The record gives the reactivity of an RNA of 177 nucleotides to 2A3 and DMS. For 2A3, 3,159 sequencing reads were counted. For DMS the reverse transcriptase was MarathonRT. The RNA was probed in 150 mM KOAc, 10 mM MgCl2 and 150 mM bicine (pH 8.5) at 24 C. 2A3 adducts were read by reverse transcription with SuperScript II with manganese.

[RMDB]
RNA sequence: GGGAACGACUCGAGUAGAGUCGAAAAUCUGUUGAAAAGGAAAAUCAGGAUUUUAAAUUGGAUUGCCCCGAUUAUCCUGGAGUUAAUUGCACUUCUUGUGAUUAUCACAGACAGGCCAAUCCUGAGGGCUUACCUUCUUAUUCGUAAGAAGGUAAGCAAAAGAAACAACAACAACAAC
Reactivity to 2A3 in 0.01 (KOAc 150mM, MgCl2 10mM, bicine 150mM(pH8.5), 24C), signal-to-noise 3, nucleotides 027 to 126: u000c010u010g020u050u060g070a090a100a060a060g060g030a060a080a040a050u020c010a010g030g000a020u020u050u050u300a100a180a070u080u110g040g030a020u030u150g070c030c020c020c010g020a010u010u020a010u040c000c000u000g000g000a030g000u020u060a070a070u110u140g030c050a030c080u150u150c030u130u150g020u010g010a020u030u050a010u060c010a010c020a080g060a060c000a010g050g000c010c030a000a020u010c000c000u020g050a070g030g100
Reactivity to DMS in 0.01 (KOAc 150mM, MgCl2 10mM, bicine 150mM(pH8.5), 24C), signal-to-noise 5, nucleotides 027 to 126: u010c020u000g000u010u000g000a090a100a130a100g000g010a070a070a060a070u010c010a060g010g010a060u000u010u000u010a020a060a160u010u010g020g000a140u000u000g010c180c040c020c050g010a040u000u000a060u000c010c000u000g010g000a110g000u000u000a040a070u000u000g010c070a040c300u000u000c160u000u010g030u000g000a040u000u010a040u010c030a060c120a140g010a110c040a040g010g010c240c100a050a070u000c000c010u000g000a090g020g020